[RMDB]
RNA sequence: GGGAACGACUCGAGUAGAGUCGAAAAGGGCAGCGAAGCUACCUACUCACAAGUACGGGAUUUGAUUUAAAUUAAUUUUGGGGUCCUACUUAAGAUUCGGAAUAGGGCAGCCUUAUCCUCAAGUGGAACGUGUACAACAGUUCGCUGUUGUACACGUAAAAGAAACAACAACAACAAC
Reactivity to 2A3 in 0.01 (KOAc 150mM, MgCl2 10mM, bicine 150mM(pH8.5), 24C), signal-to-noise 2, nucleotides 027 to 126: g000g000g020c040a020g000c030g060a080a010g070c020u020a060c000c000u000a000c000u020c020a060c010a060a030g050u110a050c090g040g030g000a040u070u060u100g050a020u080u080u250a110a250a110u110u110a060a060u110u030u070u070g020g000g000g020u000c000c000u010a040c000u040u030a080a050g020a140u120u130c070g000g020a040a110u080a130g020g080g090c000a030g070c000c000u000u020a030u050c000c000u050c100a030a030g090u120g110g060a100
Reactivity to DMS in 0.01 (KOAc 150mM, MgCl2 10mM, bicine 150mM(pH8.5), 24C), signal-to-noise 2, nucleotides 027 to 126: g000g020g000c020a030g020c020g010a080a060g000c050u000a070c050c030u000a100c080u000c050a050c150a090a060g000u000a040c140g010g000g010a030u000u020u010g000a090u000u000u000a030a100a140u010u010a040a090u000u000u000u000g020g020g000g000u000c020c020u000a040c040u010u000a060a090g010a070u000u000c110g000g000a050a070u000a000g000g000g000c080a080g010c020c010u000u010a050u000c030c040u000c110a050a120g010u000g010g010a110